[RMDB]
This 207-nucleotide RNA was probed chemically with 2A3 and DMS. The reactions ran in a buffer of 150 mM KOAc, 10 mM MgCl2 and 150 mM bicine (pH 8.5), at 24 C. As a SHAPE reagent, 2A3 marks flexible, mostly unpaired nucleotides at the ribose 2'-OH. Reactivities are given for positions 27 through 156. The 2A3 profile rests on 996 reads.
RNA sequence: GGGAACGACUCGAGUAGAGUCGAAAAGAUAGGAUUAAUCAUUUCAUCAAGUGUUAGGCCAACAGCAAUCUUUGCAGCCAAUUUGGCAAUGGGAUAACCUGUUGCUUUUGAAGCAAGGGCAGAGGAACGAGACACUCUAGGAUUUACUUCAAUAACAGAGCACUACGAUAUUCGUAUCGUAGUGCUCAAAAGAAACAACAACAACAAC
Reactivity to 2A3 in 0.01 (KOAc 150mM, MgCl2 10mM, bicine 150mM(pH8.5), 24C), signal-to-noise 2, nucleotides 027 to 156: g030a050u120a030g090g000a020u090u200a030a110u110c090a050u090u110u000c050a100u080c050a060a030g030u060g030u120u070a030g030g000c030c020a020a000c010a060g040c030a070a060u000c020u010u140u100g010c040a020g020c040c000a060a090u080u120u210g000g000c000a010a030u060g000g020g030a050u110a150a170c000c000u000g020u000u000g000c000u070u110u000u090g080a030a010g000c020a020a000g010g030g000c020a000g030a000g000g040a020a020c020g000a000g020a080c020a000c020u030c020u020a020g050g000a060u050u020u070a120c070u120u100c020a060a100u150a110a080c150a050
Reactivity to DMS in 0.01 (KOAc 150mM, MgCl2 10mM, bicine 150mM(pH8.5), 24C), signal-to-noise 1, nucleotides 027 to 156: g000a200u000a060g000g000a140u000u010a050a070u000c140a210u000u000u000c060a100u000c110a040a120g000u010g060u000u000a060g020g020c020c030a030a120c070a110g030c050a050a020u010c040u000u000u020g030c110a180g010c000c020a070a270u000u000u000g010g050c010a030a030u000g030g000g010a120u000a110a180c030c000u030g030u000u020g010c000u040u000u000u070g010a120a050g010c040a080a080g050g000g050c120a040g010a050g000g020a040a090c010g000a180g010a160c070a080c010u010c050u010a160g070g020a160u000u000u010a040c030u000u000c000a000a130u000a030a040c170a260